The record gives the reactivity of an RNA of 177 nucleotides to DMS and 2A3. For DMS the reverse transcriptase was MarathonRT. Reactivities are given for positions 27 through 126. Conditions: 150 mM KOAc, 10 mM MgCl2 and 150 mM bicine (pH 8.5), 24 C.
RNA sequence: GGGAACGACUCGAGUAGAGUCGAAAAAACAACAGGGUCUAACAUAACGUCUGUAUGCAGUAAAGCCAUUGGUUUUGAGUACGUUUUCGAACGGUUUACUAGGAAGAUGUAUGGCUCAAGCGUCCUACUACGGAAUGAUAUUCGUAUCAUUCCGUAGAAAAGAAACAACAACAACAAC
Reactivity to DMS in 0.01 (KOAc 150mM, MgCl2 10mM, bicine 150mM(pH8.5), 24C), signal-to-noise 8, nucleotides 027 to 126: a050a040c090a090a090c080a050g010g000g010u010c030u000a090a090c120a070u010a090a070c110g010u000c020u000g010u010a080u010g010c060a030g010u000a040a070a030g010c010c010a070u000u010g020g010u000u000u010u010g000a070g010u000a060c050g010u000u010u000u010c100g010a030a030c070g000g000u010u000u000a030c040u000a120g010g000a040a070g000a060u000g010u000a040u000g010g010c010u000c060a060a080g010c090g000u000c020c010u000a170
Reactivity to 2A3 in 0.01 (KOAc 150mM, MgCl2 10mM, bicine 150mM(pH8.5), 24C), signal-to-noise 6, nucleotides 027 to 126: a000a010c070a030a000c020a040g050g000g010u020c050u080a050a020c020a080u120a090a020c060g050u010c030u030g100u070a080u100g010c010a010g030u070a020a030a020g010c000c010a090u050u100g090g010u050u020u050u100g030a020g030u050a040c030g000u000u000u010u060c090g050a020a010c000g020g040u080u150u070a030c020u020a030g060g060a030a030g030a040u090g030u100a040u070g020g000c000u000c040a050a020g020c020g070u010c000c010u020a080